[RMDB]
This 177-nucleotide RNA was probed chemically with 2A3 and DMS. Conditions: 150 mM KOAc, 10 mM MgCl2 and 150 mM bicine (pH 8.5), 24 C.
RNA sequence: GGGAACGACUCGAGUAGAGUCGAAAAUCUGUUUACAAGUUAUCGUUAAGUCCAUGUCUGACUACGAUUCCGUAAACAGAAGCCAGUUUGCGUUAAGUCCGACAUGGACUCUUGGCAGAACUGAUCACGUUUUAAUACGUUUCGACGUAUUAAAACGAAAAGAAACAACAACAACAAC
Reactivity to 2A3 in 0.01 (KOAc 150mM, MgCl2 10mM, bicine 150mM(pH8.5), 24C), signal-to-noise 4, nucleotides 027 to 126: u000c010u020g040u040u110u100a060c020a040a090g000u060u070a180u190c110g050u090u190a130a020g010u000c010c010a040u030g030u000c040u030g010a010c000u040a050c060g070a020u120u000c050c010g000u020a000a000a000c010a020g090a050a000g080c020c010a030g000u010u020u020g020c030g020u050u110a060a030g000u000c010c010g030a050c090a070u050g000g000a000c010u020c010u020u030g020g000c010a020g010a060a030c030u050g040a110u160c070a030
Reactivity to DMS in 0.01 (KOAc 150mM, MgCl2 10mM, bicine 150mM(pH8.5), 24C), signal-to-noise 6, nucleotides 027 to 126: u000c010u000g020u000u010u000a090c030a090a070g010u000u000a060u010c140g020u000u010a070a060g010u000c000c040a080u000g010u000c060u000g010a020c020u000a100c170g010a120u010u000c150c040g010u000a020a010a010c000a040g000a090a090g030c130c080a090g010u000u000u000g020c020g010u000u010a060a060g000u000c000c060g000a050c080a040u010g000g000a020c010u000c020u000u000g010g010c040a050g000a030a050c050u000g010a110u010c140a150

For DMS, 6,873 sequencing reads were counted. The data come from the RNA Mapping Database (RMDB), library OK2TRN. High 2A3 reactivity points to a flexible backbone, as in loops and unpaired stretches.